[RMDB]
RNA sequence: GGGAACGACUCGAGUAGAGUCGAAAACUGCCUAUUCGUAGGCAGAAAAAGGGGUCUUAGCAAGACGAGGGACAUGUUCUGAAGCCUCCACGGAACAACAGCCUACCCACCGUCGACCUAAGACGGAGGCACCCAAAAAGCCCGGUUCGCCGGGCAACAUACACCGAAGUUUCGACUUCGGUGUAUGAAAAGAAACAACAACAACAAC
Reactivity to 2A3 in 0.01 (KOAc 150mM, MgCl2 10mM, bicine 150mM(pH8.5), 24C), signal-to-noise 2, nucleotides 027 to 156: c000u010g010c000c000u030a040u050u060c300g100u070a000g000g030c000a000g090a070a090a000a000a030g240g010g040g010u000c000u010u000a000g000c020a080a020g000a020c080g110a300g000g010g000a040c030a080u060g000u010u010c000u000g040a150a010g000c010c010u000c000c000a000c020g010g010a000a000c000a020a030c030a050g000c010c030u120a160c090c050c070a180c150c110g000u000c000g020a030c020c000u010a010a000g030a030c010g000g000a000g000g030c000a010c000c000c000a090a110a060a090a010g010c040c070c020g000g020u030u050c120g020c040c000g000g000g000c000a000a000
Source: RMDB library RNAMAK, as collected in RNAgym. Chemical mapping of a 207-nucleotide RNA with 2A3. The reactions ran in a buffer of 150 mM KOAc, 10 mM MgCl2 and 150 mM bicine (pH 8.5), at 24 C. Values are in units of 0.01, from 0 to 300, in steps of 10. 2A3 is a SHAPE reagent: it acylates the 2'-hydroxyl of flexible nucleotides of all four kinds. Reactivities are given for positions 27 through 156.